[RMDB]
RNA sequence: GGGAACGACUCGAGUAGAGUCGAAAAAGCAUUGCUGCGGUGGUUUUCAUGGCGUACCUCGUCAGUAGUUGAUACCGAGGGUUUGCGAUACGCCUGUGCCCGCCUGAUUCCGGCGUCGUCGAGUGCCGGUGCCAGUGGCAUCGGCCAUCGCUCCUAGGAUUACCUGUGUGUUCGCACACAGGUAAUCAAAAGAAACAACAACAACAAC
Reactivity to 2A3 in 0.01 (KOAc 150mM, MgCl2 10mM, bicine 150mM(pH8.5), 24C), signal-to-noise 4, nucleotides 027 to 156: a000g080c100a140u160u280g010c050u040g000c020g040g010u040g040g030u110u090u080u120c130a130u180g010g000c010g020u040a160c000c030u050c030g050u060c120a040g000u050a040g030u090u230g120a090u090a080c040c050g000a020g050g020g040u120u270u180g090c060g040a040u020a080c020g000c000c000u010g000u020g020c000c000c010g050c010c000u060g010a120u140u090c030c030g000g010c020g020u060c020g090u040c070g050a050g120u100g020c010c000g000g000u010g020c020c000a120g050u150g120g000c030a000u050c040g000g000c010c010a010u010c010g000c010u040c010c020u060a050g050
Reactivity to DMS in 0.01 (KOAc 150mM, MgCl2 10mM, bicine 150mM(pH8.5), 24C), signal-to-noise 2, nucleotides 027 to 156: a070g020c070a150u000u000g010c020u010g010c010g010g020u000g000g010u000u000u000u000c070a070u000g020g040c020g060u010a040c010c030u000c030g000u000c050a070g000u000a020g020u000u000g000a300u010a030c060c010g020a100g000g010g020u000u000u000g040c110g010a100u000a010c020g000c010c010u020g030u000g000c100c000c000g020c020c020u030g000a150u010u000c030c020g000g010c030g030u000c080g000u010c120g010a070g010u010g010c000c000g060g000u000g010c030c010a220g020u010g030g030c000a020u000c140g010g000c010c040a020u000c020g010c010u000c010c020u000a220g040